RNA sequence: GGGAACGACUCGAGUAGAGUCGAAAAAGCAACGAGUGUGUGUGGGACGUUUUAUCCCAAGCUCUGAGUAGAGCAGGCGCUCACACACACCGCGAGCGAGCAUCAGCAGAGCGCAAACGCUGGUAAAAUUAAGUAGAUUAUUCGUAAUCUACUUAAUAAAAGAAACAACAACAACAAC
Reactivity to DMS in 0.01 (KOAc 150mM, MgCl2 10mM, bicine 150mM(pH8.5), 24C), signal-to-noise 9, nucleotides 027 to 126: a100g010c040a170a050c020g000a250g020u000g010u000g020u000g010u000g000g000g000a090c020g020u000u000u010u010a130u010c030c030c040a110a120g010c000u000c000u000g010a190g020u010a040g010a010g020c010a170g000g000c020g000c000u000c000a000c010a010c000a010c000a010c010c010g000c030g000a280g010c020g010a110g010c090a040u000c030a030g010c020a080g010a110g010c080g010c120a070a070a110c130g010c010u000g000g010u000a050a050a090
Reactivity to 2A3 in 0.01 (KOAc 150mM, MgCl2 10mM, bicine 150mM(pH8.5), 24C), signal-to-noise 9, nucleotides 027 to 126: a010g050c040a040a060c020g020a090g060u020g000u000g000u000g000u010g000g010g050a080c010g010u010u050u120u220a140u110c020c030c020a020a020g000c000u010c010u080g300a250g180u300a020g130a000g000c010a000g010g010c010g000c000u000c000a000c000a000c000a000c000a000c000c000g040c010g000a010g010c010g010a030g010c010a040u050c010a010g010c010a010g030a050g140c080g000c110a110a050a030c060g000c010u030g020g030u110a100a120a050

The record gives the reactivity of an RNA of 177 nucleotides to DMS and 2A3. For DMS the reverse transcriptase was MarathonRT. The RNA was probed in 150 mM KOAc, 10 mM MgCl2 and 150 mM bicine (pH 8.5) at 24 C. 2A3 adducts were read by reverse transcription with SuperScript II with manganese. It was measured as part of the RMDB library M2PK90.